[RMDB]
RNA sequence: GGGAACGACUCGAGUAGAGUCGAAAAGAAAGAAAGAAUUCCAGACACAUCUCAUCUGAUAUACAAUAUUUUCUUAAAUUGUAUAAAGAGAAAUUAUUGUACAUCGGAUGAGCUGUGUCUGGGAUAAAUAUAAAAAUACAUUCGUGUAUUUUUAUAUAAAAGAAACAACAACAACAAC
Reactivity to 2A3 in 0.01 (KOAc 150mM, MgCl2 10mM, bicine 150mM(pH8.5), 24C), signal-to-noise 2, nucleotides 027 to 126: g030a000a050a000g090a030a070a010g060a090a020u030u000c020c010a000g000a000c000a000c020a010u010c000u000c000a000u010c000u000g000a000u020a000u000a030c000a000a000u000a010u030u020u070u010c010u050u110a300a300a300u290u170g060u070a260u100a300a120a040g010a000g010a020a000a000u000u000a000u010u000g000u010a020c020a010u000c010g000g000a000u000g010a000g020c000u000g000u010g000u000c000u000g000g020g000a000u000a010a000